Structure probing data (DMS and 2A3) for a 177-nucleotide construct.
2A3 adducts were read by reverse transcription with SuperScript II with manganese.

[RMDB]
RNA sequence: GGGAACGACUCGAGUAGAGUCGAAAAACAGCGACAUUUUCUUCAAACGGCGUAUGAUUAUUUGUAGCACCGACCAUCGAUGAAACGAUUGAAAAAUCUUCAAUGUCACCUACAGCUUUAAGUCCAAGAUCACUCUUACGUUCGCGUAAGAGUGAUCAAAAGAAACAACAACAACAAC
Reactivity to DMS in 0.01 (KOAc 150mM, MgCl2 10mM, bicine 150mM(pH8.5), 24C), signal-to-noise 1, nucleotides 027 to 126: a150c080a110g000c010g000a060c110a070u000u000u010u000c040u000u000c060a020a080a070c060g000g030c070g040u000a010u010g000a080u000u000a060u000u010u010g020u000a020g010c050a120c030c030g000a050c050c030a140u010c070g010a090u000g000a080a120a130c150g000a030u000u000g000a050a060a020a100a040u000c040u000u010c040a020a060u020g040u000c050a030c010c030u000a060c110a090g000c060u000u020u000a060a070g050u000c050c060a100a130
Reactivity to 2A3 in 0.01 (KOAc 150mM, MgCl2 10mM, bicine 150mM(pH8.5), 24C), signal-to-noise 2, nucleotides 027 to 126: a030c020a010g050c030g050a050c010a010u010u100u040u000c040u130u060c060a090a030a040c070g060g000c020g030u100a040u120g060a040u180u040a010u090u150u180g060u020a000g010c000a020c050c040g050a040c030c000a060u060c050g080a070u080g030a080a040a020c120g040a050u050u050g020a070a000a010a000a020u020c020u040u000c070a060a050u020g010u060c020a060c020c000u060a040c010a010g040c020u050u090u050a120a030g070u040c000c040a000a000